[RMDB]
RNA sequence: GGGAACGACUCGAGUAGAGUCGAAAACUGAUUUUUAGUCAGGAUUAACCAGUGAGCAGCCGCUCCGUUCACUCCUCCUCGUCUUUGGGAGGAUGCUGAGCGUCGUUUAGAAGACUUGCUGAUGCAGUUGAGCCUCAGGGCUGCAUCGGGACUUUAAACAUGCAUAUCUCUUCGGAGAUAUGCAUGUAAAAGAAACAACAACAACAAC
Reactivity to 2A3 in 0.01 (KOAc 150mM, MgCl2 10mM, bicine 150mM(pH8.5), 24C), signal-to-noise 4, nucleotides 027 to 156: c010u010g000a030u070u050u090u200u300a060g020u000c000a000g030g020a060u110u100a070a040c020c010a020g010u020g040a000g020c020a020g180c070c290g010c040u000c000c000g000u010u000c010a000c010u000c000c000u010c000c000u020c030g010u000c010u000u020u020g000g000g000a000g000g000a000u020g010c150u010g000a000g000c000g030u060c010g010u070u100u110a030g000a020a000g000a010c020u100u300g000c000u020g000a000u000g000c010a000g020u040u060g080a050g100c030c040u140c080a020g040g070g000c000u000g000c000a000u000c000g000g000g000a010c000u090u050u080a100a190
Reactivity to DMS in 0.01 (KOAc 150mM, MgCl2 10mM, bicine 150mM(pH8.5), 24C), signal-to-noise 1, nucleotides 027 to 156: c000u010g000a020u000u000u000u000u040a140g030u010c040a020g000g000a180u010u010a080a130c040c000a120g000u020g010a110g020c000a140g060c090c070g010c000u000c020c000g010u000u000c000a030c010u010c010c000u000c000c000u000c190g010u010c140u000u010u000g050g000g020a030g010g010a010u000g010c130u010g020a050g010c000g020u010c080g000u000u020u000a130g030a070a270g000a040c050u010u000g030c030u000g000a030u000g010c010a050g020u000u000g000a160g010c050c040u000c020a130g000g000g010c000u000g000c010a010u000c040g000g000g010a120c010u000u000u000a070a090